[RMDB]
RNA sequence: GGGAACGACUCGAGUAGAGUCGAAAACUGCCCAUAAGACUGGGAUAACUCCGGGAAACCGGGGCUAAUACCGGAUAACAUUUUGAACCGCAUGGUUCGAAAUUGAAAGGCGGCUUCGGCUGUCACUACUCGGUCCAAUAUUCGUAUUGGACCGAGUAAAAGAAACAACAACAACAAC
Reactivity to 2A3 in 0.01 (KOAc 150mM, MgCl2 10mM, bicine 150mM(pH8.5), 24C), signal-to-noise 2, nucleotides 027 to 126: c030u090g050c000c010c000a030u060a010a090g130a060c040u050g000g000g030a010u010a050a000c010u000c020c000g000g000g000a010a050a000c000c000g000g000g000g000c010u010a010a010u060a130c000c000g000g010a040u110a040a070c060a060u010u000u020u000g000a000a000c000c030g070c250a140u300g030g000u000u010c000g000a000a010a000u020u080g090a080a050a070g000g000c000g000g000c030u030u030c130g060g000c000u000g050u020c010a020c050u050